RNA sequence: GGGAACGACUCGAGUAGAGUCGAAAACUUCAACGGCCAUGGCUACCACCUCUUCCAGGCCAUGCGCUUUGGCAUUGAGGAGAUCAACAACUCCACGACCUUGCUGCCUAACGUCACCCUGGGGUACUAGGGCCUUACUAUUCGUAGUAAGGCCCUAAAAAGAAACAACAACAACAAC
Reactivity to 2A3 in 0.01 (KOAc 150mM, MgCl2 10mM, bicine 150mM(pH8.5), 24C), signal-to-noise 1, nucleotides 027 to 126: c030u100u070c060a120a000c060g030g000c000c000a030u000g040g000c000u030a070c020c060a050c040c020u020c020u150u150c070c010a010g020g000c000c020a010u010g010c090g010c040u080u120u130g000g000c040a080u040u070g020a000g080g000a050g060a070u090c080a020a210c020a060a050c020u030c040c020a030c030g040a040c000c030u030u020g010c030u060g050c020c000u070a120a040c020g040u110c060a100c030c010c020u040g120g000g010g000u020a020c040
Reactivity to DMS in 0.01 (KOAc 150mM, MgCl2 10mM, bicine 150mM(pH8.5), 24C), signal-to-noise 2, nucleotides 027 to 126: c080u000u000c050a100a110c060g030g010c000c000a000u000g020g000c040u000a100c140c040a110c090c040u000c060u000u000c060c080a060g010g010c000c030a010u000g020c160g000c060u010u020u010g040g000c110a110u000u010g000a070g000g000a080g020a090u000c090a060a140c270a120a110c070u000c020c020a180c100g000a060c020c020u000u020g000c070u000g000c030c060u010a080a080c080g000u010c030a080c080c000c010u000g020g010g020g020u000a070c090
The data come from the RNA Mapping Database (RMDB), library OK2TRN.
Structure probing data (2A3 and DMS) for a 177-nucleotide construct.
2A3 adducts were read by reverse transcription with SuperScript II with manganese.
DMS adducts were read by reverse transcription with MarathonRT.
The DMS profile rests on 1,143 reads.